Chemical mapping of a 177-nucleotide RNA with DMS and 2A3. 2A3 adducts were read by reverse transcription with SuperScript II with manganese. DMS adducts were read by reverse transcription with MarathonRT. High DMS reactivity at an A or C suggests that its Watson-Crick edge is free. Values cover nucleotides 27 to 126.
[RMDB]
RNA sequence: GGGAACGACUCGAGUAGAGUCGAAAACGAGGGUCCAGUGGUAGUCAGGCCAGUGACAGUGAGGGACAUUCAGAAGACUCAGACACACAGUCAGUGUCAGCCCACGGACAGGCUGGGCCCCAUCAGCCCGGAAGAGUGAGUUCGCUCACUCUUCCGGAAAAGAAACAACAACAACAAC
Reactivity to DMS in 0.01 (KOAc 150mM, MgCl2 10mM, bicine 150mM(pH8.5), 24C), signal-to-noise 2, nucleotides 027 to 126: c050g020a110g050g010g030u000c020c010a030g030u000g000g020u000a090g030u010c060a170g030g010c010c180a020g000u000g000a050c030a070g010u000g010a070g060g010g000a110c060a090u000u000c240a210g020a170a140g030a140c040u000c090a060g050a090c090a060c030a070c300a050g040u010c050a070g020u000g000u010c050a080g020c000c020c090a090c170g020g010a040c050a060g000g040c020u000g000g000g000c010c010c000c050a050u010c070a100g010c120
Reactivity to 2A3 in 0.01 (KOAc 150mM, MgCl2 10mM, bicine 150mM(pH8.5), 24C), signal-to-noise 1, nucleotides 027 to 126: c010g010a090g030g060g000u020c000c000a010g000u010g130g150u090a200g020u020c010a060g020g000c020c000a000g070u000g080a040c040a010g000u020g040a070g030g010g020a020c030a040u160u160c060a180g150a300a000g010a140c010u000c150a020g040a170c010a020c010a020c020a100g040u020c010a020g030u010g020u020c070a010g060c010c000c040a040c090g030g000a000c000a020g090g000c000u000g000g020g000c000c000c000c000a030u010c010a010g090c030